[RMDB]
An RNA of 177 nucleotides, treated with DMS and 2A3 and read out base by base. The 2A3 profile rests on 1,479 reads. Reactivities are given for positions 27 through 126. The RNA was probed in 150 mM KOAc, 10 mM MgCl2 and 150 mM bicine (pH 8.5) at 24 C. The data come from the RNA Mapping Database (RMDB), library OK2TST. 2A3 adducts were read by reverse transcription with SuperScript II with manganese.
RNA sequence: GGGAACGACUCGAGUAGAGUCGAAAAGGACCGGAAAAACCUCGCCGACAUUGCGAUCAGCGACCCGGCGGCGUUCACCGCGCUGGUCGACGUCGCCCGGGCGGCACUGCCCGAAGACGUCAACGCCUACUCUCUAACGCUUCGGCGUUAGAGAGUAAAAAGAAACAACAACAACAAC
Reactivity to DMS in 0.01 (KOAc 150mM, MgCl2 10mM, bicine 150mM(pH8.5), 24C), signal-to-noise 2, nucleotides 027 to 126: g000g010a180c030c010g000g000a090a090a080a140a070c110c060u000c000g020c050c010g030a040c100a020u000u000g010c130g020a090u010c050a060g030c040g000a070c130c010c020g000g000c020g010g020c090g010u000u000c170a100c070c050g000c210g020c070u010g020g080u000c080g000a010c010g010u000c000g030c180c090c010g010g000g010c000g000g010c190a060c100u010g020c020c000c020g000a040a130g000a040c020g000u010c020a050a080c050g000c040c030
Reactivity to 2A3 in 0.01 (KOAc 150mM, MgCl2 10mM, bicine 150mM(pH8.5), 24C), signal-to-noise 1, nucleotides 027 to 126: g050g010a040c030c090g080g100a030a100a060a020a030c000c000u000c010g000c030c000g060a050c040a040u090u300g040c040g130a220u090c050a020g030c000g030a110c000c030c050g020g010c020g000g010c010g030u130u110c050a030c070c020g100c030g060c160u220g010g010u020c040g020a010c010g000u000c000g000c050c040c000g020g010g000c000g000g000c030a050c140u140g020c000c000c000g010a020a000g050a010c040g000u070c020a050a020c010g070c010c010